[RMDB]
RNA sequence: GGGAACGACUCGAGUAGAGUCGAAAAGAUAUGGAAAUGUGAUGGACAUGAAGCGUGGUCGGAAACGACCAUACUUCAACAGCCAUACAUUUCCUAAGUCAAACUGCAAGUCUUCGGACUUGCAGAACGUAAGAUGUGUCUUCGGACACAUCUUACGAAAAGAAACAACAACAACAAC
Reactivity to 2A3 in 0.01 (KOAc 150mM, MgCl2 10mM, bicine 150mM(pH8.5), 24C), signal-to-noise 2, nucleotides 027 to 126: g010a000u020a010u080g000g050a020a010a000u010g030u170g150a090u030g050g060a040c220a300u300g000a020a020g010c020g020u010g000g000u000c000g020g010a000a010a000c010g000a010c000c000a000u000a010c000u000u000c000a080a120c140a100g000c000c010a010u000a010c000a000u000u000u020c000c000u020a000a010g000u000c020a120a060a100c020u000g000c000a000a000g000u000c000u050u240c300g210g010a010c000u000u000g030c000a000g000a010a000
Reactivity to DMS in 0.01 (KOAc 150mM, MgCl2 10mM, bicine 150mM(pH8.5), 24C), signal-to-noise 2, nucleotides 027 to 126: g010a020u000a100u010g000g000a010a000a010u000g010u010g030a040u000g010g000a050c160a110u020g000a030a000g010c030g020u000g010g020u010c000g030g000a010a020a060c000g010a000c000c000a000u000a010c000u010u000c000a050a020c240a210g000c000c000a000u000a020c000a010u000u000u010c000c000u000a000a080g000u010c000a180a130a300c000u000g040c010a010a010g010u000c000u000u040c290g030g000a000c000u000u000g030c010a000g020a040a060
Chemical mapping of a 177-nucleotide RNA with 2A3 and DMS. Conditions: 150 mM KOAc, 10 mM MgCl2 and 150 mM bicine (pH 8.5), 24 C. Reactivities are given for positions 27 through 126. For DMS the reverse transcriptase was MarathonRT.